[RMDB]
RNA sequence: GGGAACGACUCGAGUAGAGUCGAAAAAAACGCUGGGAGUACCCUUCUAAGACAGUCCUUUAAGACAGAUGACUGAAGCGCGCACGGUCAUCAAUGACGAAGGAUCGAGAAGGGAACUCCUGUGCUGAAGCGCGCACGGCAACCGAAAGGUGCGAAACAGGAUAAUACCCUUCGGGGUAUUAUCCUGAAAAGAAACAACAACAACAAC
Reactivity to 2A3 in 0.01 (KOAc 150mM, MgCl2 10mM, bicine 150mM(pH8.5), 24C), signal-to-noise 1, nucleotides 027 to 156: a000a000a000c020g010c000u020g000g020g000a030g110u240a230c000c000c000u000u000c030u090a060a000g000a000c000a000g000u010c000c000u010u030u070a240a030g080a150c060a040g000a010u000g000a000c000u010g010a180a110g050c000g000c000g000c000a030c010g000g000u000c000a010u000c010a150a300u050g010a010c000g010a000a000g020g000a000u030c000g000a000g000a020a000g000g010g010a010a000c010u000c000c000u000g010u000g000c000u020g050a100a040g000c000g000c000g020c010a010c000g000g010c010a000a030c000c000g000a020a070a040g000g000u060g000c020g070a100a050a060
Overview
Conditions: 150 mM KOAc, 10 mM MgCl2 and 150 mM bicine (pH 8.5), 24 C. The record gives the reactivity of an RNA of 207 nucleotides to 2A3. 2A3 adducts were read by reverse transcription with SuperScript II with manganese.